[RMDB]
RNA sequence: GGGAACGACUCGAGUAGAGUCGAAAAGAUAUGGAUCAUCAGGGAGAUGGUCACAAUCGGAAACGAUUGUGACAUCGAAGAACUGAUGAGUCCUAAGUCAUUAGAUUGGCGCUUCGGCGCCAAUCAACAUAUCUAAAGUCUUCGGACUUUAGAUAUGAAAAGAAACAACAACAACAAC
Reactivity to 2A3 in 0.01 (KOAc 150mM, MgCl2 10mM, bicine 150mM(pH8.5), 24C), signal-to-noise 4, nucleotides 027 to 126: g010a000u050a010u090g000g000a010u010c000a000u000c000a010g020g050g030a180g080a210u240g100g110u020c000a000c000a000a010u010c010g000g000a020a020a010c000g000a000u000u000g000u010g010a000c010a000u050c010g040a100a040g020a030a000c000u010g000a000u000g010a020g020u000c000c000u000a060a020g050u020c020a060u050u150a050g010a010u000u010g010g000c010g020c050u060u100c300g130g000c000g010c010c000a000a000u000c000a000a000
Reactivity to DMS in 0.01 (KOAc 150mM, MgCl2 10mM, bicine 150mM(pH8.5), 24C), signal-to-noise 6, nucleotides 027 to 126: g010a020u000a270u010g000g000a170u000c010a000u000c010a010g020g000g000a110g020a050u010g020g010u000c000a000c000a000a000u000c000g000g000a080a060a110c000g010a020u000u000g010u000g000a020c000a010u000c060g010a100a130g010a200a190c000u000g000a010u000g010a030g010u000c000c000u000a030a100g010u000c020a120u020u000a120g000a010u000u000g000g010c000g020c000u000u010c220g030g020c000g010c000c000a000a000u000c000a090a220
Description:
An RNA of 177 nucleotides, treated with 2A3 and DMS and read out base by base. Conditions: 150 mM KOAc, 10 mM MgCl2 and 150 mM bicine (pH 8.5), 24 C. The data come from the RNA Mapping Database (RMDB), library TTRDEL. The DMS profile rests on 11,773 reads. Values cover nucleotides 27 to 126.